[RMDB]
RNA sequence: GGGAACGACUCGAGUAGAGUCGAAAAGCUUGGUUAACCUCUCAUUGUCAACCAAAUACUUUGAGACUAAAUCUUUAGCUUGAGCUAUGUCCUCUUCCAUGGCGGAGGGGCGGUCGACCUGGUGUGGUGACGAUUAAACUUUCGAGUUUAAUCGUCAAAAAGAAACAACAACAACAAC
Reactivity to DMS in 0.01 (KOAc 150mM, MgCl2 10mM, bicine 150mM(pH8.5), 24C), signal-to-noise 6, nucleotides 027 to 126: g010c040u010u020g000g000u010u010a070a110c300c230u010c070u010c080a030u010u010g010u020c110a090a090c130c130a060a110a070u030a080c010u000u010u000g010a110g000a020c030u020a110a060a060u010c040u020u030u020a060g010c010u010u000g000a110g000c040u030a050u040g010u040c000c010u010c010u010u000c010c010a190u030g010g010c140g020g000a020g000g000g010g000c010g000g010u000c040g010a110c030c000u010g000g010u000g000u000g010g010
Reactivity to 2A3 in 0.01 (KOAc 150mM, MgCl2 10mM, bicine 150mM(pH8.5), 24C), signal-to-noise 7, nucleotides 027 to 126: g000c000u020u030g010g000u040u030a030a040c020c020u060c020u030c070a070u030u130g060u060c030a050a090c070c020a100a090a010u220a060c010u020u010u010g030a020g020a010c020u060a080a080a110u100c010u050u230u100a020g010c000u040u110g040a010g020c030u050a070u220g050u090c000c000u010c000u030u000c010c040a250u220g150g000c140g030g020a010g000g000g020g000c010g000g010u010c020g010a070c000c010u040g000g050u070g030u050g090g100